[RMDB]
RNA sequence: GGGAACGACUCGAGUAGAGUCGAAAAAUCUACACGUCCGGUUCGUUCUUCGACGAGCGCGAGGUCGGUGCCGAGACCCGGCGAGCGAUCGCCGAGACCUUCGCCGAUCGCGACCGGAUGGUCGUCGAUAUCCGGUAUGGUUCGCCAUACCGGAUAUAAAAGAAACAACAACAACAAC
Reactivity to DMS in 0.01 (KOAc 150mM, MgCl2 10mM, bicine 150mM(pH8.5), 24C), signal-to-noise 5, nucleotides 027 to 126: a080u020c020u010a040c040a140c040g010u010c060c020g000g000u020u020c030g020u000u020c060u010u040c090g010a030c060g000a090g020c060g010c060g000a120g000g000u000c010g000g020u000g020c240c140g010a060g010a140c060c000c000g020g000c000g000a030g000c280g000a110u000c010g000c060c000g000a040g000a110c080c020u000u000c060g020c050c010g010a020u010c010g000c030g010a130c010c000g010g000a060u000g010g000u010c080g000u010c070g000
Reactivity to 2A3 in 0.01 (KOAc 150mM, MgCl2 10mM, bicine 150mM(pH8.5), 24C), signal-to-noise 8, nucleotides 027 to 126: a000u020c010u020a020c060a010c040g020u010c010c000g020g020u080u100c010g010u060u080c050u150u140c060g050a050c030g050a070g060c100g000c030g040a020g030g030u010c000g010g040u060g040c070c070g130a120g010a130c010c020c000g000g010c010g000a020g010c050g080a110u020c000g000c010c000g010a030g020a070c020c000u030u020c000g000c010c000g050a070u020c010g000c010g020a020c000c010g010g020a010u020g020g020u020c050g030u010c020g010

Source: RMDB library OK1LIB, as collected in RNAgym. Structure probing data (DMS and 2A3) for a 177-nucleotide construct. Conditions: 150 mM KOAc, 10 mM MgCl2 and 150 mM bicine (pH 8.5), 24 C.